[RMDB]
RNA sequence: GGGAACGACUCGAGUAGAGUCGAAAAGAUACCGUUCGCGGUAUCAAAAAUCCUAAGUCGUUCCUCCAUCUCUAGCGUGGACGAUGAAACAUCGGAAACGAUGUGGAGUCUCGGGUGGAGAGAACGAUAUGGAAAAAAACCCAUGUUCGCAUGGGAAUCUUUUUCGUGGAUUCGUCCACGAAAAAGAAAAAGAAACAACAACAACAAC
Reactivity to 2A3 in 0.01 (KOAc 150mM, MgCl2 10mM, bicine 150mM(pH8.5), 24C), signal-to-noise 1, nucleotides 027 to 156: g000a000u000a020c000c010g000u030u010c250g040c010g060g000u000a000u000c000a000a040a000a000a000u050c030c000u080a110a060g020u000c000g010u020u040c060c020u000c000c000a010u040c030u040c030u130a150g130c040g170u300g070g010a000c030g170a210u030g010a030a000a000c010a000u010c000g050g000a090a100a130c010g000a000u020g000u010g030g000a020g000u010c010u030c050g020g030g000u000g000g000a030g010a020g000a000a000c000g000a000u010a020u000g000g070a000a090a000a000a050a020a180c020c000c020a000u030g050u080u080c300g000c070a000u000g000g000g050a100a010